RNA sequence: GGGAACGACUCGAGUAGAGUCGAAAAUACGGUAGAAGAAAGUAUCACCUAUCUCAACUCCAGGAUUGGACCAGUACUAGGCUCAUCAUAGUUAAGCCACAAUCCACGAUUCCUCAUCAGCUAUAAAGACGUUGGGGAAAUUCGUUUCCCCAACGUCAAAAGAAACAACAACAACAAC
Reactivity to 2A3 in 0.01 (KOAc 150mM, MgCl2 10mM, bicine 150mM(pH8.5), 24C), signal-to-noise 3, nucleotides 027 to 126: u070a030c050g010g000u100a120g010a140a000g060a060a240a030g040u110a130u060c020a040c000c000u010a030u060c050u010c030a020a060c020u000c000c010a020g040g000a030u070u100g050g010a000c000c000a000g000u020a030c070u050a020g040g000c000u000c000a070u000c000a080u120a060g040u060u100a050a000g010c000c010a010c010a000a020u000c000c000a040c020g020a050u040u040c000c000u030c040a110u010c010a000g020c050u070a070u050a090a080a000
Reactivity to DMS in 0.01 (KOAc 150mM, MgCl2 10mM, bicine 150mM(pH8.5), 24C), signal-to-noise 1, nucleotides 027 to 126: u000a080c060g000g000u030a010g000a060a190g000a150a050a070g010u000a040u000c000a060c000c000u000a000u020c000u000c080a130a080c030u050c070c000a050g000g000a130u010u000g020g010a220c060c020a170g050u000a070c160u000a120g000g000c000u030c070a140u060c020a070u050a060g000u020u040a140a040g000c000c060a020c080a150a000u000c040c020a220c010g000a060u000u000c000c000u000c070a000u000c000a050g000c050u000a160u080a010a010a060